Chemical mapping of a 207-nucleotide RNA with 2A3. Conditions: 150 mM KOAc, 10 mM MgCl2 and 150 mM bicine (pH 8.5), 24 C. It was measured as part of the RMDB library RNAMAK.

[RMDB]
RNA sequence: GGGAACGACUCGAGUAGAGUCGAAAAGCGAGAGGUUCGCCUCUCGCAAAAAAGAUAUGGAAUGGGCUGCUUUUGACGAAGUCGUGAUCGGAAACGAUCAAAGUCUUCGAUAAGCAGCCAUUCCUAAGUCAAAAACGUUCGGUUUCGACCGAACGAAUCAGUUUUUCUGGUUCGCCAGAAAAACUGAAAAAGAAACAACAACAACAAC
Reactivity to 2A3 in 0.01 (KOAc 150mM, MgCl2 10mM, bicine 150mM(pH8.5), 24C), signal-to-noise 1, nucleotides 027 to 156: g040c000g000a010g000a010g040g020u110u160c230g090c040c000u000c000u000c000g000c000a000a000a000a040a000a000g040a040u030a020u060g000g020a000a010u020g130g130g000c030u010g010c030u090u110u130u190g200a150c130g000a010a010g000u030c060g030u060g020a010u000c000g000g010a120a010a000c010g000a020u000c010a080a040a000g000u000c040u000u000c040g090a070u050a110a010g000c000a000g000c000c000a000u000u000c000c000u000a000a000g010u010c020a000a000a030a090a120c040g010u010u010c000g020g070u010u110u140c230g110a050c000c000g020a000a000c010g000a010a070